[RMDB]
RNA sequence: GGGAACGACUCGAGUAGAGUCGAAAAUGAUGCAAUGACUUAUGCCUUGUUUGGUAAAGCAUCAACUGAACAAAGAGAAGAAAAUGAUUUGAGAAGUCAUUUCGCUGAUGGUAAACAGCCGAUGUCAUCAAAGAGUUCAGUUCGCUGAACUCUUUGAAAAAGAAACAACAACAACAAC
Reactivity to 2A3 in 0.01 (KOAc 150mM, MgCl2 10mM, bicine 150mM(pH8.5), 24C), signal-to-noise 4, nucleotides 027 to 126: u060g010a010u030g010c030a030a160u080g030a070c020u130u190a030u150g020c000c020u210u170g140u280u170u070g010g000u050a090a050a020g020c000a020u030c010a000a040c010u030g030a040a000c040a050a080a050g120a010g050a160a050g030a040a080a010a030u040g020a030u010u100u160g140a140g020a080a000g020u000c000a000u020u010u020c060g000c020u040g010a110u080g020g080u070a110a130a040c000a010g020c000c020g050a060u060g030u080c010a040
Reactivity to DMS in 0.01 (KOAc 150mM, MgCl2 10mM, bicine 150mM(pH8.5), 24C), signal-to-noise 4, nucleotides 027 to 126: u000g000a040u000g020c020a150a110u000g010a050c040u000u010a130u010g020c010c020u000u020g010u000u020u000g010g030u010a060a100a160g020c040a020u000c010a090a220c040u000g000a100a040c050a060a080a090g010a080g010a130a050g000a120a050a030a040u000g000a030u000u000u000g020a200g000a110a130g000u000c000a000u000u000u000c050g010c020u010g000a160u000g000g020u010a060a090a130c070a030g000c000c080g020a090u000g010u000c040a100